[RMDB]
Overview: An RNA of 207 nucleotides, treated with DMS and 2A3 and read out base by base.
RNA sequence: GGGAACGACUCGAGUAGAGUCGAAAAAUACAAGGGGAGGUUUCGGCCAAAUGUUGUAUGCAGAAAGCGUUAGGAAGGUAGCACUUAGACACUCACGAGUAGCGGUUCGGCAGUAGUGCUAAAAUGAGACAGUACGAAAAGUUCGCUUUUCGUACAAGAUACCACUAGCGUUCGCGCUAGUGGUAUCAAAAGAAACAACAACAACAAC
Reactivity to DMS in 0.01 (KOAc 150mM, MgCl2 10mM, bicine 150mM(pH8.5), 24C), signal-to-noise 2, nucleotides 027 to 156: a080u000a060c030a060a060g010g000g020g010a110g020g000u000u000u000c040g010g020c020c010a070a070a110u000g010u010u000g020u000a130u000g000c050a060g020a080a070a040g010c060g030u000u000a070g000g000a060a070g020g020u000a040g020c020a030c060u000u000a090g000a080c050a030c040u010c100a080c020g010a080g030u000a040g000c040g010g000u000u000c060g040g010c030a060g010u000a050g030u000g000c020u000a010a040a050a100u010g000a160g020a160c070a100g010u000a010c020g000a020a010a010a000g020u000u020c300g030c000u000u000u010u000c000g030u000a000c000a000a050
Reactivity to 2A3 in 0.01 (KOAc 150mM, MgCl2 10mM, bicine 150mM(pH8.5), 24C), signal-to-noise 3, nucleotides 027 to 156: a000u130a010c060a050a060g010g010g000g010a040g040g020u000u030u060c050g070g000c030c000a030a100a050u120g020u050u020g060u050a090u060g010c040a020g060a080a060a010g030c060g080u110u090a020g020g040a060a010g070g030u060a040g000c020a000c070u030u050a040g010a050c030a020c110u050c010a030c050g020a030g010u050a020g080c030g040g050u070u050c020g050g000c010a000g010u150a000g000u000g030c010u050a080a050a010a020u080g000a040g010a030c070a070g020u010a000c010g010a000a000a000a000g020u030u070c120g030c050u010u000u000u010c000g000u000a010c000a010a000
Annotation: Values cover nucleotides 27 to 156. Source: RMDB library M2RFPK, as collected in RNAgym. For 2A3 the reverse transcriptase was SuperScript II with manganese.